This 177-nucleotide RNA was probed chemically with DMS and 2A3. For 2A3 the reverse transcriptase was SuperScript II with manganese. The data come from the RNA Mapping Database (RMDB), library OK2TST. Values cover nucleotides 27 to 126.
RNA sequence: GGGAACGACUCGAGUAGAGUCGAAAAUUGUGUGGGAUUUACAUAUGUCGGGGUUAUUUCAUUUGACAUUGACUGAUGACGAAUUGCGAGGACGUAUAGGGUCGGUAUUCGUGGAACCACCAGAUCCAUUACUCACAAUUUUCGAAUUGUGAGUAAUAAAAGAAACAACAACAACAAC
Reactivity to DMS in 0.01 (KOAc 150mM, MgCl2 10mM, bicine 150mM(pH8.5), 24C), signal-to-noise 9, nucleotides 027 to 126: u000u000g010u010g030u000g000g010g000a140u000u000u010a100c070a070u010a050u000g010u000c030g010g000g010g010u000u010a060u010u010u010c110a120u010u010u000g010a040c060a040u000u000g010a110c230u010g010a090u000g010a060c060g000a030a050u000u010g020c050g010a110g010g000a060c050g010u010a100u010a170g010g010g010u000c020g010g010u000a060u000u000c050g010u000g010g010a070a110c050c020a030c020c030a080g000a070u010c040c030
Reactivity to 2A3 in 0.01 (KOAc 150mM, MgCl2 10mM, bicine 150mM(pH8.5), 24C), signal-to-noise 9, nucleotides 027 to 126: u110u070g050u020g010u030g040g030g050a080u090u110u130a040c010a010u140a030u090g020u020c010g010g010g010g030u040u070a080u070u260u080c080a090u040u030u140g030a030c020a020u020u050g040a040c030u050g050a070u080g020a030c020g020a030a050u060u070g040c030g030a120g070g050a030c020g040u060a110u150a200g090g020g010u010c010g000g020u020a030u020u030c020g000u020g050g040a030a020c020c000a010c010c000a020g010a050u020c020c010
The RNA was probed in 150 mM KOAc, 10 mM MgCl2 and 150 mM bicine (pH 8.5) at 24 C.